[RMDB]
RNA sequence: GGGAACGACUCGAGUAGAGUCGAAAACGGACGGGAUUUUAGCCAGGUUGCAUGUUUACCCAUUUCGUGCUGGGUCCUGGACCCAUUUAAGAUCAUAGAAAUAUUAUCGAUUUCUUUACCGUCCGGACCCUAUGAUACUCUUCGGAGUAUCAUAGGGAAAAGAAACAACAACAACAAC
Reactivity to DMS in 0.01 (KOAc 150mM, MgCl2 10mM, bicine 150mM(pH8.5), 24C), signal-to-noise 4, nucleotides 027 to 126: c020g010g020a020c000g010g000g000a060u010u010u000u010a060g010c040c030a040g000g050u000u000g010c030a030u000g000u010u000u000a110c040c050c030a110u010u000u000c080g020u000g010c130u000g010g020g000u000c050c060u010g020g010a120c040c040c070a080u020u010u000a040a040g000a020u000c020a150u000a050g000a040a020a020u000a020u010u010a120u010c160g000a050u000u000u010c020u000u000u010a300c000c000g000u000c000c000g000g000a080
Reactivity to 2A3 in 0.01 (KOAc 150mM, MgCl2 10mM, bicine 150mM(pH8.5), 24C), signal-to-noise 2, nucleotides 027 to 126: c010g000g000a000c010g000g000g000a040u030u050u090u200a030g020c030c000a020g000g060u080u130g020c030a030u040g090u240u270u180a140c020c020c020a030u070u140u130c040g000u030g000c050u060g000g150g180u040c000c010u020g000g000a060c030c020c000a020u050u060u020a020a020g020a020u010c030a030u050a060g060a030a050a010u120a070u250u140a100u140c080g050a030u000u060u000c000u030u120u100a090c000c010g000u000c000c000g010g010a010
An RNA of 177 nucleotides, treated with DMS and 2A3 and read out base by base. As a SHAPE reagent, 2A3 marks flexible, mostly unpaired nucleotides at the ribose 2'-OH. The reactions ran in a buffer of 150 mM KOAc, 10 mM MgCl2 and 150 mM bicine (pH 8.5), at 24 C. High DMS reactivity at an A or C suggests that its Watson-Crick edge is free. The 2A3 profile rests on 1,499 reads. 2A3 adducts were read by reverse transcription with SuperScript II with manganese.